[RMDB]
Structure probing data (DMS and 2A3) for a 177-nucleotide construct. For DMS the reverse transcriptase was MarathonRT. 2A3 is a SHAPE reagent: it acylates the 2'-hydroxyl of flexible nucleotides of all four kinds.

RNA sequence: GGGAACGACUCGAGUAGAGUCGAAAAUUGAUACAUAAAUUCUUCCGCCAUAGCAACCCCAGCAUAAGGAGCUAGGAAGAGCAAUGGAGAUGGUUGUGAAGCAGAGGCUGUCACAACGAUUGUGUAGACGACUGACUAAUUUCGAUUAGUCAGUCGUAAAAGAAACAACAACAACAAC
Reactivity to DMS in 0.01 (KOAc 150mM, MgCl2 10mM, bicine 150mM(pH8.5), 24C), signal-to-noise 3, nucleotides 027 to 126: u040u010g010a210u000a040c040a050u000a070a090a160u020u000c020u000u010c010c040g010c110c070a080u010a090g010c010a050a190c120c000c010c050a100g010c050a130u050a140a100g020g010a170g000c030u000a090g010g010a050a020g000a220g000c080a120a040u000g020g000a090g000a070u010g000g010u000u000g000u000g000a090a030g000c000a180g020a120g010g010c000u020g030u000c010a000c030a020a020c000g000a050u000u000g000u020g000u000a060g000
Reactivity to 2A3 in 0.01 (KOAc 150mM, MgCl2 10mM, bicine 150mM(pH8.5), 24C), signal-to-noise 3, nucleotides 027 to 126: u150u060g050a050u080a080c050a050u130a140a230a120u080u000c000u030u000c000c030g040c040c030a080u090a060g000c010a010a230c000c030c000c000a020g070c030a010u070a290a080g150g000a030g030c020u060a030g000g010a060a030g020a000g020c010a040a200u090g090g020a090g030a040u150g090g030u020u000g010u010g000a000a000g000c040a050g050a080g300g000c050u130g120u290c030a000c010a000a020c020g020a000u040u090g060u010g000u050a050g030
It was measured as part of the RMDB library OK1LIB.